[RMDB]
Background: This 207-nucleotide RNA was probed chemically with DMS and 2A3. The reactions ran in a buffer of 150 mM KOAc, 10 mM MgCl2 and 150 mM bicine (pH 8.5), at 24 C. Values cover nucleotides 27 to 156. DMS (dimethyl sulfate) methylates the pairing face of unpaired adenines and cytosines. The data come from the RNA Mapping Database (RMDB), library RNAMAK.

RNA sequence: GGGAACGACUCGAGUAGAGUCGAAAAGAAUGGUUCGCCAUUCACAGAUUCCUAAGUCGGAAGAGGAGUGAGCUAGCUGAGUAUCGGAAACGAUAUCCAGCUUGGACCUCACUCUCCCCACCUUCCGAUAUGGAUAGUAGCUUACUUCGGUAAGCAAUCUACAGCGUAAAUUCGUUUACGCUGUAGAAAAAGAAACAACAACAACAAC
Reactivity to DMS in 0.01 (KOAc 150mM, MgCl2 10mM, bicine 150mM(pH8.5), 24C), signal-to-noise 3, nucleotides 027 to 156: g010a040a050u010g020g020u000u000c300g050c020c020a030u000u000c000a120c140a240g000a210u000u000c010c010u000a090a240g000u000c010g040g000a080a040g000a300g000g040a040g000u000g000a010g050c020u010a040g050c010u020g000a030g000u000a000u000c000g010g030a180a110a290c020g000a020u010a010u000c010c000a010g010c010u000u000g020g010a110c280c010u000c030a020c020u020c030u000c220c050c030c070a300c150c040u000u000c000c010g000a060u010a130u000g010g010a070u010a130g000u000a170g020c010u000u000a000c010u000u000c270g040g000u010a010a000g010c000a030a040
Reactivity to 2A3 in 0.01 (KOAc 150mM, MgCl2 10mM, bicine 150mM(pH8.5), 24C), signal-to-noise 5, nucleotides 027 to 156: g010a000a000u010g010g050u070u130c230g070c080c000a010u010u020c020a020c010a050g200a160u090u060c010c000u040a120a050g000u000c000g010g000a000a010g010a010g000g010a000g000u010g000a000g020c020u020a000g000c000u010g010a010g070u010a000u000c000g000g060a120a040a070c010g010a010u010a010u030c010c020a000g000c000u010u040g010g070a040c020c000u000c000a000c000u000c010u010c010c000c000c010a050c000c000u000u000c000c000g010a010u020a040u060g020g000a010u040a100g200u140a040g040c010u010u020a010c000u050u030c200g060g000u010a000a000g000c000a010a030